[RMDB]
RNA sequence: GGGAACGACUCGAGUAGAGUCGAAAAGGCGACCGAGCCGACAGCGUCCUAGCGGGAGACGCUUGGAUGCUCGUUGCAUUUUGGCCGAUACCCGCAUCUGUUCCGGCGCUGCGCUCCAUCAUGGCUAGUAAAGAGUCGUAUUCGUACGACUCUUUACAAAAGAAACAACAACAACAAC
Reactivity to 2A3 in 0.01 (KOAc 150mM, MgCl2 10mM, bicine 150mM(pH8.5), 24C), signal-to-noise 5, nucleotides 027 to 126: g060g000c010g050a060c050c070g010a050g020c030c040g040a040c020a000g000c000g030u000c010c030u070a080g000c000g010g010g000a060g010a020c010g000c000u000u000g020g000a000u020g000c010u040c090g300u140u210g000c020a030u010u020u030u070g020g010c020c000g010a040u190a110c010c010c010g010c010a100u090c080u190g080u160u050c040c010g010g010c010g000c010u010g000c010g010c010u010c030c020a110u110c030a060u190g080g000c020u030a070
Reactivity to DMS in 0.01 (KOAc 150mM, MgCl2 10mM, bicine 150mM(pH8.5), 24C), signal-to-noise 7, nucleotides 027 to 126: g010g010c030g000a070c110c130g020a050g020c030c020g020a190c050a020g010c010g010u000c010c100u010a110g020c010g010g010g000a100g010a300c300g000c000u000u000g010g000a040u000g000c000u010c300g010u010u010g000c020a060u000u000u000u000g010g020c010c020g000a270u010a040c010c010c000g000c040a080u000c120u010g000u000u010c080c050g000g000c030g010c020u010g010c060g000c030u000c010c070a080u000c070a070u000g010g000c040u000a150